Annotation
Structure probing data (DMS and 2A3) for a 207-nucleotide construct. The 2A3 profile rests on 9,422 reads. Values cover nucleotides 27 to 156. The RNA was probed in 150 mM KOAc, 10 mM MgCl2 and 150 mM bicine (pH 8.5) at 24 C.
RNA sequence: GGGAACGACUCGAGUAGAGUCGAAAACAAGCCUUCGGGCUUGGCGUGAGUCAGGAUGGCCGAGUGGUCUAAGGCGCCAGAUUAAGGUUCUGGUCUCGAAUCGGGCGUGGGUUCAAAUCCCACUCUUGACACCAACUGUCACCCGUUCGCGGGUGAACUUUACUGAAGAUUUCGAUCUUCAGUAAAGAAAAGAAACAACAACAACAAC
Reactivity to DMS in 0.01 (KOAc 150mM, MgCl2 10mM, bicine 150mM(pH8.5), 24C), signal-to-noise 3, nucleotides 027 to 156: c010a050a020g030c010c000u000u010c300g060g020g030c000u000u000g000g020c080g030u010g000a150g000u000c040a110g010g010a060u000g020g000c030c030g010a180g030u010g020g020u000c050u030a080a120g010g020c100g020c010c030a040g010a100u000u010a120a140g010g010u000u000c070u010g000g010u000c040u010c020g010a070a070u000c030g030g020g040c050g000u000g000g010g000u040u010c210a090a300a170u000c010c000c010a020c020u000c010u000u010g010a080c020a070c010c060a030a130c100u010g000u010c000a020c000c010c000g010u000u000c200g030c050g000g000g000u000g010a010a080
Reactivity to 2A3 in 0.01 (KOAc 150mM, MgCl2 10mM, bicine 150mM(pH8.5), 24C), signal-to-noise 8, nucleotides 027 to 156: c020a010a000g010c010c010u080u120c230g070g000g000c000u000u000g010g010c020g050u110g030a070g020u020c020a010g040g030a030u080g060g000c020c020g020a040g050u180g050g070u090c040u090a050a050g030g000c030g020c010c010a010g010a030u150u150a160a080g140g020u060u010c010u030g020g000u010c020u030c060g140a210a190u200c060g020g000g000c020g000u010g000g000g000u040u070c020a020a020a050u060c010c000c000a000c000u000c000u010u020g000a010c000a020c060c030a080a070c070u130g040u070c000a010c010c000c010g020u070u070c220g010c010g090g000g000u000g000a000a010